Notes: The data come from the RNA Mapping Database (RMDB), library RNAMAK. An RNA of 207 nucleotides, treated with 2A3 and DMS and read out base by base. The RNA was probed in 150 mM KOAc, 10 mM MgCl2 and 150 mM bicine (pH 8.5) at 24 C.
[RMDB]
RNA sequence: GGGAACGACUCGAGUAGAGUCGAAAAACCACCUUCGGGUGGUCUGCGACCUUUGUGAUACGACAGUUGUCAGAAGGGGAGUGCCCAUUGGGCAUGAAAGACUUCUUGGAUUUACUGAGAACGUAUCACUCUGGUAAUCUGACGCUUUCGAGCGUAAUAAGUACUCGUCAUUCGUGACGAGUACUUAAAAAGAAACAACAACAACAAC
Reactivity to 2A3 in 0.01 (KOAc 150mM, MgCl2 10mM, bicine 150mM(pH8.5), 24C), signal-to-noise 3, nucleotides 027 to 156: a000c020c000a020c010c000u060u090c220g190g000g000u000g010g050u010c030u160g150c030g050a020c000c010u030u040u030g010u010g000a010u010a010c160g090a060c230a010g000u030u020g010u050c010a000g020a020a020g000g020g010g010a110g000u000g000c020c000c030a090u230u300g020g000g000c010a000u050g100a050a080a100g160a050c010u020u010c020u080u130g220g000a040u290u230u040a040c010u030g010a050g110a300a050c000g020u000a000u000c000a000c000u010c010u030g000g000u010a030a110u010c050u120g040a010c000g010c030u000u050u210c200g070a010g020c000g060u040a050a090
Reactivity to DMS in 0.01 (KOAc 150mM, MgCl2 10mM, bicine 150mM(pH8.5), 24C), signal-to-noise 1, nucleotides 027 to 156: a010c000c020a020c010c000u000u010c210g040g050g090u010g040g000u000c000u000g060c080g010a140c000c010u000u000u000g020u000g000a070u050a020c000g070a150c010a080g020u000u010g010u040c050a070g030a070a010g020g010g020g020a300g030u010g010c000c000c010a300u000u010g020g010g000c000a030u000g010a200a110a250g020a120c030u000u010c010u010u010g000g020a060u000u000u000a060c000u000g000a150g020a150a140c000g020u010a010u020c030a040c000u000c030u000g030g030u000a060a180u010c040u020g000a030c000g000c020u010u000u000c130g000a040g030c000g000u000a030a110
Record summary: For DMS, 2,414 sequencing reads were counted.